[RMDB]
RNA sequence: GGGAACGACUCGAGUAGAGUCGAAAAGAGAUGGCGAGAGCCAUCGGUAGUAUAGCGAAAAUCAUAAAUGAGAAGAGCUCUAAACGCCUAAGUAGAGUUAAAAUAAUUAGCCAGGCACUACUACAAACACGGCCUCGAACGUUCGCGUUCGAGGCAACUAUCGGAUGCUGUUCGCAGCAUCCGAUAGAAAAGAAACAACAACAACAAC
Reactivity to 2A3 in 0.01 (KOAc 150mM, MgCl2 10mM, bicine 150mM(pH8.5), 24C), signal-to-noise 1, nucleotides 027 to 156: g080a000g010a010u010g010g000c010g000a060g040a040g060c000c000a010u010c000g000g000u000a030g000u010a030u100a060g010c040g020a040a040a050a050u150c090a100u150a190a130a160u270g030a060g010a150a030g060a000g020c000u000c000u030a040a050a070c060g010c020c030u080a140a060g040u020a000g030a010g010u170u110a030a100a000a090u130a040a120u180u100a040g020c000c000a000g000g040c000a000c010u060a000c000u000a050c030a000a120a000c020a030c140g210g010c000c000u000c000g000a000a010c000g040u090u100c300g000c010g080u000u000c000g010a010g000g000c000a000a000

Record summary:
This 207-nucleotide RNA was probed chemically with 2A3. For 2A3 the reverse transcriptase was SuperScript II with manganese. The data come from the RNA Mapping Database (RMDB), library M2RFPK. The RNA was probed in 150 mM KOAc, 10 mM MgCl2 and 150 mM bicine (pH 8.5) at 24 C.